[RMDB]
RNA sequence: GGGAACGACUCGAGUAGAGUCGAAAAAGUGUGAAUUAACACACAUGCAAACAAGUGUAAGGCGUAGCAAUACGACCGAUGCCGGAGCAGGACAGUAUGACAACGUGCCACUGAUCAUGUGCCUAAGAUCCCCAGUUAAGUUCGCUUAACUGGGGAUAAAAGAAACAACAACAACAAC
Reactivity to DMS in 0.01 (KOAc 150mM, MgCl2 10mM, bicine 150mM(pH8.5), 24C), signal-to-noise 5, nucleotides 027 to 126: a110g000u010g000u000g000a100a090u030u020a120a080c030a040c030a030c000a130u010g000c110a120a050a100c140a070a070g010u020g010u000a110a160g000g010c000g010u000a030g000c230a060a080u020a010c020g000a120c020c000g020a080u010g020c010c060g000g030a120g020c010a060g000g020a070c110a070g000u000a030u030g000a110c140a040a080c080g020u010g010c020c020a020c050u000g000a110u010c060a020u020g000u020g020c050c010u010a070a100g010
Reactivity to 2A3 in 0.01 (KOAc 150mM, MgCl2 10mM, bicine 150mM(pH8.5), 24C), signal-to-noise 8, nucleotides 027 to 126: a000g030u040g000u030g060a110a210u220u160a250a000c000a000c000a000c010a010u080g080c060a060a130a130c020a120a100g030u050g030u170a090a070g030g000c000g010u010a010g020c040a050a070u020a070c050g110a190c020c010g010a030u110g010c000c020g030g010a010g010c040a020g010g050a030c020a050g050u110a060u130g030a030c020a070a010c100g040u090g090c030c010a030c030u020g020a040u060c020a040u040g030u060g060c000c010u070a110a020g100